[RMDB]
Chemical mapping of a 207-nucleotide RNA with 2A3 and DMS. The RNA was probed in 150 mM KOAc, 10 mM MgCl2 and 150 mM bicine (pH 8.5) at 24 C. DMS adducts were read by reverse transcription with MarathonRT. The data come from the RNA Mapping Database (RMDB), library M2RFPK. For DMS, 2,068 sequencing reads were counted. For 2A3 the reverse transcriptase was SuperScript II with manganese. In probing experiments dimethyl sulfate is read out at A N1 and C N3, which are open when not base-paired.
RNA sequence: GGGAACGACUCGAGUAGAGUCGAAAAUUCUCAGCACUCAUCAAGAAGUAGGCUUAGGCCAAUUGCUUGGUGGUGAAAGUAGAGGGAAGGUAGCACUUCGACGCCUCUAAGUACACUGUGGGAGUAGAAAACUGGACAUCGUUCGCGAUGUCCAGAACCAUUCUACCACGUUCGCGUGGUAGAAUGGAAAAGAAACAACAACAACAAC
Reactivity to 2A3 in 0.01 (KOAc 150mM, MgCl2 10mM, bicine 150mM(pH8.5), 24C), signal-to-noise 3, nucleotides 027 to 156: u020u000c000u000c010a010g030c000a000c060u260c010a010u020c010a020a030g020a100a030g030u070a030g000g010c010u090u100a070g100g090c020c010a040a110u050u070g020c000u020u000g000g000u010g000g000u010g020a050a030a000g070u050a000g010a010g030g040g000a000a090g070g000u040a020g060c030a040c090u030u020c040g100a060c090g100c010c000u020c010u000a010a020g040u070a050c090a020c120u080g020u140g090g040g020a050g010u130a030g100a060a020a060a110c000u000g000g000a000c000a000u000c000g020u060u000c080g030c030g100a000u010g010u000c000c000a000g010a000a000
Reactivity to DMS in 0.01 (KOAc 150mM, MgCl2 10mM, bicine 150mM(pH8.5), 24C), signal-to-noise 1, nucleotides 027 to 156: u000u000c010u010c000a170g050c030a030c000u000c010a000u000c000a080a060g020a000a020g020u000a120g010g010c030u010u010a170g050g050c020c000a070a100u010u010g020c000u000u000g000g000u040g020g040u000g010a090a060a100g030u010a080g020a070g030g010g000a160a050g000g020u000a160g000c150a220c020u000u000c010g000a090c030g000c030c020u000c020u010a020a130g000u020a040c090a050c000u000g030u010g000g000g020a150g020u000a150g010a090a060a150a090c000u000g010g020a040c010a000u000c000g020u000u020c300g000c040g000a000u010g000u010c000c010a000g000a000a050